Chemical mapping of a 207-nucleotide RNA with 2A3. The 2A3 profile rests on 1,873 reads. The RNA was probed in 150 mM KOAc, 10 mM MgCl2 and 150 mM bicine (pH 8.5) at 24 C. It was measured as part of the RMDB library OK3TST.

[RMDB]
RNA sequence: GGGAACGACUCGAGUAGAGUCGAAAAGGGAUAAGAGAGUACUCUUAUCCCCACGUCGUUGGUGACAACGACGAUUAUCCGGUGGCCACCAGCCCAGGCCACCGUUACUCCACUCCACUCCUUCGGGACUGGUUUGGAGGAACAUAACCGGGCUAAACCUCAUAGUACGUUUCGACGUACUAUGAGGAAAAGAAACAACAACAACAAC
Reactivity to 2A3 in 0.01 (KOAc 150mM, MgCl2 10mM, bicine 150mM(pH8.5), 24C), signal-to-noise 2, nucleotides 027 to 156: g000g000g000a010u010a000a010g000a010g060a050g170u190a220c010u000c000u010u000a000u000c010c000c000c010a030c030g030u000c010g000u000u010g000g050u060g030a050c000a000a000c000g000a000c000g000a020u140u120a060u180c010c000g000g000u000g000g000c000c010a090c050c070a010g000c000c000c000a010g000g000c010c000a000c000c000g000u000u050a020c000u000c000c020a000c000u000c000c000a000c010u010c000c020u010u110c210g050g000g000a000c000u000g010g000u010u000u000g010g010a010g020g010a020a020c030a030u150a030a010c060c110g010g000g000c000u010a080a040a030